[RMDB]
RNA sequence: GGGAACGACUCGAGUAGAGUCGAAAAGAUAUGGAACUAGAUCGCGAUAAGACCGGGUCGGAAACGACCCAGGUCUUUUGACGCGAUUUUUUUUAGUUCCUAAGUCAAACUGGCGUUCGCGCCAGAAGUAGUGUAUCAACUUCGGUUGAUACACUACAAAAGAAACAACAACAACAAC
Reactivity to DMS in 0.01 (KOAc 150mM, MgCl2 10mM, bicine 150mM(pH8.5), 24C), signal-to-noise 2, nucleotides 027 to 126: g000a040u000a220u020g000g010a000a000c010u000a040g000a000u000c000g040c020g030a180u000a000a000g010a010c000c010g030g000g010u010c010g000g000a070a070a110c000g000a030c000c000c000a010g020g010u000c000u000u000u020u010g010a190c070g000c000g010a000u010u000u000u010u020u040u010u000a010g010u010u000c000c010u000a020a140g000u000c010a090a100a200c020u000g000g010c010g020u010u010c280g010c040g010c000c000a000g000a070a130
Reactivity to 2A3 in 0.01 (KOAc 150mM, MgCl2 10mM, bicine 150mM(pH8.5), 24C), signal-to-noise 1, nucleotides 027 to 126: g030a000u060a010u100g040g000a000a000c000u000a000g010a030u000c000g000c040g170a170u110a220a000g000a030c010c000g050g070g000u000c000g020g030a100a020a020c030g010a020c000c040c070a040g000g000u030c000u000u010u010u030g000a010c010g000c100g030a000u000u030u000u000u050u000u040u090a030g000u030u000c020c010u010a030a010g000u020c020a040a020a170c010u000g000g010c000g020u070u080c300g000c030g000c140c000a000g000a040a030